[RMDB]
RNA sequence: GGGAACGACUCGAGUAGAGUCGAAAAGGGCUUUACCGCCCAACUUCUAGCGUUAAGGUCCUUCGCGGGCUGAUCCGGGUUGAAGACAUUGUCAGGUGGGGAGUUUGGCUGGGGCGGCACAUCUGUUUCACUGAAUGGAAUUCGUUCCAUUCAGUGAAAAAGAAACAACAACAACAAC
Reactivity to DMS in 0.01 (KOAc 150mM, MgCl2 10mM, bicine 150mM(pH8.5), 24C), signal-to-noise 2, nucleotides 027 to 126: g020g000g010c000u050u010u010a110c140c110g000c020c000c040a090a090c190u010u030c030u010a130g000c030g030u050u000a000a250g050g040u000c000c000u000u100c190g000c150g070g000g000c060u000g020a190u040c080c030g000g000g000u000u000g000a090a020g000a010c110a060u010u040g010u080c100a140g040g050u010g030g020g000g000a090g020u010u100u000g000g000c180u030g100g000g000g000c060g030g030c030a070c160a020u000c050u000g040u010u000
Reactivity to 2A3 in 0.01 (KOAc 150mM, MgCl2 10mM, bicine 150mM(pH8.5), 24C), signal-to-noise 4, nucleotides 027 to 126: g000g000g000c010u010u040u070a070c020c020g020c000c000c020a050a060c010u140u070c020u040a030g020c020g040u080u030a090a000g030g010u010c020c000u080u060c100g030c130g030g040g000c030u030g020a070u030c030c010g030g050g000u080u080g050a030a020g040a060c070a180u090u180g050u080c050a030g000g090u100g030g020g020g020a080g050u010u090u080g070g010c040u040g000g000g000g000c000g000g010c020a010c000a100u040c030u020g030u040u020
The data come from the RNA Mapping Database (RMDB), library RFM100. Chemical mapping of a 177-nucleotide RNA with DMS and 2A3. The DMS profile rests on 1,574 reads. The RNA was probed in 150 mM KOAc, 10 mM MgCl2 and 150 mM bicine (pH 8.5) at 24 C. 2A3 adducts were read by reverse transcription with SuperScript II with manganese.